This 177-nucleotide RNA was probed chemically with DMS and 2A3.
Values cover nucleotides 27 to 126.
The reactions ran in a buffer of 150 mM KOAc, 10 mM MgCl2 and 150 mM bicine (pH 8.5), at 24 C.
It was measured as part of the RMDB library RFM100.
[RMDB]
RNA sequence: GGGAACGACUCGAGUAGAGUCGAAAAGCCAUCUCAACGGGGUGCUGGCUGUUUAAAACAGCCUUGCUGAGAGUAAACCCGCCGAACCUGAUCCGGCUAAUACCGGCGUAGGGAUUUGAGCUGCUAAUCCAAGUCAAGCUUUCGAGCUUGACUUGGAAAAAGAAACAACAACAACAAC
Reactivity to DMS in 0.01 (KOAc 150mM, MgCl2 10mM, bicine 150mM(pH8.5), 24C), signal-to-noise 2, nucleotides 027 to 126: g020c010c080a080u000c030u030c000a100a060c110g000g000g000g020u020g000c000u000g010g000c000u090g000u010u000u060a040a060a160a080c030a000g020c000c010u000u020g020c030u000g000a070g000a180g110u010a070a070a020c030c000c040g050c060c180g000a040a020c020c020u000g000a100u010c000c030g000g010c020u000a150a130u040a300c000c020g000g030c070g000u030a140g030g000g000a060u010u010u010g000a040g030c020u030g000c020u000a110a060
Reactivity to 2A3 in 0.01 (KOAc 150mM, MgCl2 10mM, bicine 150mM(pH8.5), 24C), signal-to-noise 2, nucleotides 027 to 126: g040c030c000a050u000c020u010c010a050a020c010g000g000g000g000u060g000c000u010g000g000c010u000g160u010u130u220a090a190a020a000c000a000g010c000c000u010u140g020c000u000g000a010g000a010g000u200a140a300a100c000c010c020g060c110c040g020a010a020c000c000u020g030a050u070c010c000g000g000c040u000a010a010u090a080c020c000g000g010c000g040u120a000g080g000g000a020u130u040u070g000a000g000c070u050g010c020u100a120a000